[RMDB]
RNA sequence: GGGAACGACUCGAGUAGAGUCGAAAACAACGGUCGCCGACGAUAAAAUCGUAUCGAUUGAAAUCAGCGGCUCGGGGCCAUGGGAGGAUACCGGAGAUCGAUAUGACGGCAGCAGUGCCUUGGCGCUGGAACGUAAAAGGUUCGCCUUUUACGUUCCAAAAGAAACAACAACAACAAC
Reactivity to 2A3 in 0.01 (KOAc 150mM, MgCl2 10mM, bicine 150mM(pH8.5), 24C), signal-to-noise 1, nucleotides 027 to 126: c020a040a010c000g080g010u040c030g000c030c010g020a080c050g020a040u110a110a120a000a060u000c010g000u070a050u150c070g000a000u030u100g010a120a090a040u090c030a050g010c040g050g000c040u030c030g080g000g050g000c010c020a060u030g060g000g000a040g020g020a020u040a140c010c000g050g000a070g000a030u060c040g000a020u030a040u120g050a040c030g020g000c010a020g040c020a020g050u050g030c010c050u010u050g070g000c030g000c030u050
Reactivity to DMS in 0.01 (KOAc 150mM, MgCl2 10mM, bicine 150mM(pH8.5), 24C), signal-to-noise 2, nucleotides 027 to 126: c030a140a210c090g040g020u010c040g070c000c010g040a040c020g000a140u000a050a190a060a100u000c000g010u000a080u010c040g000a040u000u030g000a110a200a070u000c040a060g010c010g000g010c060u000c070g020g010g050g010c050c070a030u000g010g020g020a090g010g030a090u010a090c090c020g000g000a110g000a030u000c010g010a060u010a050u000g000a060c100g000g010c000a090g000c130a080g020u000g000c010c020u000u010g000g010c030g010c180u010

The record gives the reactivity of an RNA of 177 nucleotides to 2A3 and DMS. Values are in units of 0.01, from 0 to 300, in steps of 10. The reactions ran in a buffer of 150 mM KOAc, 10 mM MgCl2 and 150 mM bicine (pH 8.5), at 24 C. It was measured as part of the RMDB library RFMREP. DMS adducts were read by reverse transcription with MarathonRT.